[RMDB]
RNA sequence: GGGAACGACUCGAGUAGAGUCGAAAAUGAUAAAGGCUUCGUUAUCUGCCUGAUUUUUAUUGCCUGAGCAAGACACUAACAAAGGUGCAAUGACCAACAAAGCUAAAAUUUUCUUCAUCUUACAAGCCCUAUCGGCUCUAUUCGUAGAGCCGAUAGGAAAAGAAACAACAACAACAAC
Reactivity to DMS in 0.01 (KOAc 150mM, MgCl2 10mM, bicine 150mM(pH8.5), 24C), signal-to-noise 2, nucleotides 027 to 126: u020g000a060u000a160a170a110g000g010c020u000u040c070g030u000u000a180u000c040u000g010c010c040u010g000a030u000u000u000u010u000a070u000u020g020c030c010u000g010a120g000c110a090a030g000a040c050a060c080u000a070a090c160a060a080a090g000g000u000g000c150a070a120u000g000a030c040c100a030a040c020a030a060a080g020c070u000a020a030a160a070u000u000u000u000c050u000u000c090a050u000c020u000u020a110c170a100a170g020c120
Reactivity to 2A3 in 0.01 (KOAc 150mM, MgCl2 10mM, bicine 150mM(pH8.5), 24C), signal-to-noise 1, nucleotides 027 to 126: u000g000a000u050a090a040a040g010g010c000u020u050c070g030u040u030a060u070c020u030g000c010c000u020g090a130u060u030u000u030u070a060u000u120g010c010c010u050g020a040g070c000a020a020g050a010c000a010c040u160a180a050c040a040a130a000g030g010u050g010c000a050a030u090g010a040c080c040a020a020c010a020a030a030g000c020u170a110a180a060a240u100u140u060u000c050u030u050c000a050u010c020u050u070a050c010a080a060g080c000